[RMDB]
RNA sequence: GGGAACGACUCGAGUAGAGUCGAAAAGUGAGAUCACUCGUGUUCGAACGUGAUCACGAUCACACUCGUGAGUGAACGAACGAUCUCGUUCUCACGAGUUCUCACGUGUUCGAUCACUCACGAACUCGAGUGUUCGUACUCGUACGAGUUCGUGUGAAUCCCUCAUGAGAUUCGUCUCAUGAGGGAUAAAAGAAACAACAACAACAAC
Reactivity to 2A3 in 0.01 (KOAc 150mM, MgCl2 10mM, bicine 150mM(pH8.5), 24C), signal-to-noise 5, nucleotides 027 to 156: g020u040g020a010g000a050u130c090a030c030u000c010g010u010g040u150u160c130g000a010a000c000g010u020g010a010u010c000a010c050g010a040u030c010a010c020a010c080u200c110g170u180g110a090g000u030g050a040a040c010g010a090a060c070g000a020u030c050u010c020g010u020u000c020u000c010a000c000g000a000g000u000u000c000u000c010a020c020g010u030g000u000u040c050g020a110u060c030a030c060u060c020a010c020g020a040a000c000u000c000g030a050g010u030g030u100u080c050g010u070a050c000u010c030g100u160a090c090g010a000g030u040u030c010g000u000g010u000g050a010
Reactivity to DMS in 0.01 (KOAc 150mM, MgCl2 10mM, bicine 150mM(pH8.5), 24C), signal-to-noise 2, nucleotides 027 to 156: g010u010g010a060g020a030u000c110a070c030u000c010g030u000g010u010u000c200g000a030a060c060g010u010g000a040u010c000a120c040g010a210u010c020a070c050a150c080u000c120g000u000g010a060g010u000g010a080a120c030g000a050a140c080g000a040u000c060u000c000g000u000u000c000u000c020a000c020g040a070g030u020u000c030u000c030a030c050g020u000g020u000u000c020g030a170u000c030a210c030u010c020a110c030g000a020a000c010u010c020g020a110g020u010g010u000u000c110g010u000a040c040u000c020g050u000a140c100g010a070g020u010u000c020g030u010g020u000g000a220